[RMDB]
RNA sequence: GGGAACGACUCGAGUAGAGUCGAAAAUCCGGCAUCUUGCUGUGCACUACUUAGUACGCGCGUAGUUGCAGGCAUUCCGGGUGCAGCAACUGACGCGGAAGACUUUUCCCAGAGUGUGCGCUUCAACAUCAUGUCAUGCUUUCGAGCAUGACAUGAUAAAAGAAACAACAACAACAAC
Reactivity to DMS in 0.01 (KOAc 150mM, MgCl2 10mM, bicine 150mM(pH8.5), 24C), signal-to-noise 4, nucleotides 027 to 126: u010c000c000g010g030c090a070u030c110u010u020g010c030u000g010u010g020c010a030c030u040a060c050u000u000a040g010u010a070c080g010c020g000c050g010u010a020g010u000u000g020c020a110g020g000c010a020u000u020c130c170g000g030g040u000g000c010a080g010c010a000a010c000u000g000a030c010g000c000g030g000a070a100g000a060c070u000u000u000u000c010c010c000a170g010a040g010u000g020u000g010c020g010c030u040u000c040a090a090c250
Reactivity to 2A3 in 0.01 (KOAc 150mM, MgCl2 10mM, bicine 150mM(pH8.5), 24C), signal-to-noise 6, nucleotides 027 to 126: u040c020c000g020g030c040a100u060c040u170u180g000c050u060g030u040g020c000a010c020u110a020c010u130u080a010g030u070a040c040g020c010g010c020g120u000a000g010u000u010g000c020a060g130g000c000a010u090u090c060c120g180g030g000u010g020c010a010g000c000a010a020c010u180g060a040c020g000c010g030g020a060a030g070a050c010u050u050u050u050c000c000c020a030g010a010g040u020g000u010g010c020g010c010u070u060c030a070a100c010

The record gives the reactivity of an RNA of 177 nucleotides to DMS and 2A3. 2A3 adducts were read by reverse transcription with SuperScript II with manganese. For DMS the reverse transcriptase was MarathonRT. Conditions: 150 mM KOAc, 10 mM MgCl2 and 150 mM bicine (pH 8.5), 24 C. The data come from the RNA Mapping Database (RMDB), libraries RFM100 and RFMREP.